Conditions: 150 mM KOAc, 10 mM MgCl2 and 150 mM bicine (pH 8.5), 24 C. Structure probing data (DMS and 2A3) for a 177-nucleotide construct. It was measured as part of the RMDB library OK2TRN. 2A3 adducts were read by reverse transcription with SuperScript II with manganese. For 2A3, 806 sequencing reads were counted. Values cover nucleotides 27 to 126.

RNA sequence: GGGAACGACUCGAGUAGAGUCGAAAAACUCCUGGUAAGGAUAGUGCAUCUUCAGCUGUUAAGUGUUUCAGUGUUACAGAUUUCUUGAAGAAAGCUGUUUUUCUUAAGGAAGCACUGAAAUGUGAACCUUACAGGCACUGUUCGCAGUGCCUGUAAGAAAAGAAACAACAACAACAAC
Reactivity to DMS in 0.01 (KOAc 150mM, MgCl2 10mM, bicine 150mM(pH8.5), 24C), signal-to-noise 2, nucleotides 027 to 126: a100c120u000c000c000u000g000g010u010a100a060g020g000a040u000a080g020u000g000c120a060u000c060u010u000c100a070g010c060u000g020u010u000a100a140g010u000g010u000u000u010c000a020g000u000g020u000u000a050c100a120g010a060u000u000u000c000u020u010g020a120a100g000a010a030a020g010c090u000g000u010u010u000u000u000c020u000u010a110a070g030g010a020a070g000c010a030c000u000g010a000a000a010u000g010u010g010a080a090c170
Reactivity to 2A3 in 0.01 (KOAc 150mM, MgCl2 10mM, bicine 150mM(pH8.5), 24C), signal-to-noise 1, nucleotides 027 to 126: a000c030u060c000c000u050g000g080u110a100a100g080g030a070u080a120g120u120g020c000a100u010c070u110u030c050a030g020c030u030g050u250u080a150a040g030u000g080u050u010u060c000a010g000u010g020u120u060a040c040a070g040a080u000u020u160c010u160u170g090a100a090g000a000a080a000g070c080u070g150u220u130u040u040u000c010u010u040a020a010g050g000a040a000g000c010a000c010u010g010a020a000a000u040g050u000g010a010a010c000